RNA sequence: GGGAACGACUCGAGUAGAGUCGAAAAAGAAAUAGAUGAAGUAGGAGGCUGUUAGCGCUCUAGUGUGUCUUCAGAUAAGAUAUGUCUGGCCUAGUUCAUCGGAUACAUAGGACCAACGCUAAAAAAACUCUUUAUAUCUCUUCGGAGAUAUAAAGAGAAAAGAAACAACAACAACAAC
Reactivity to 2A3 in 0.01 (KOAc 150mM, MgCl2 10mM, bicine 150mM(pH8.5), 24C), signal-to-noise 1, nucleotides 027 to 126: a000g090a000a050a030u180a030g010a030u020g010a010a010g100u020a010g020g010a030g110g030c050u040g050u300u030a030g000c030g010c050u000c060u050a060g050u070g000u000g000u020c000u000u030c040a000g010a150u180a080a040g080a050u090a040u160g100u000c030u020g030g000c020c010u030a050g090u010u010c000a050u020c020g020g010a090u130a070c030a050u130a050g000g070a020c030c030a010a010c010g020c130u150a000a040a040a000a040a080a110
Reactivity to DMS in 0.01 (KOAc 150mM, MgCl2 10mM, bicine 150mM(pH8.5), 24C), signal-to-noise 2, nucleotides 027 to 126: a110g020a040a120a110u020a180g000a050u020g010a010a020g000u000a050g020g020a160g020g000c020u020g010u000u000a020g040c090g020c080u020c020u000a050g020u000g020u000g020u000c010u010u000c110a040g020a060u030a030a080g000a130u000a080u010g000u000c010u010g000g050c050c000u000a020g000u000u000c010a040u000c020g010g000a080u010a040c100a100u010a090g000g000a160c040c020a050a070c120g030c050u000a000a000a050a080a030a080a140

Annotation
This 177-nucleotide RNA was probed chemically with 2A3 and DMS. 2A3 adducts were read by reverse transcription with SuperScript II with manganese. In probing experiments dimethyl sulfate is read out at A N1 and C N3, which are open when not base-paired. The reactions ran in a buffer of 150 mM KOAc, 10 mM MgCl2 and 150 mM bicine (pH 8.5), at 24 C. The DMS profile rests on 1,472 reads.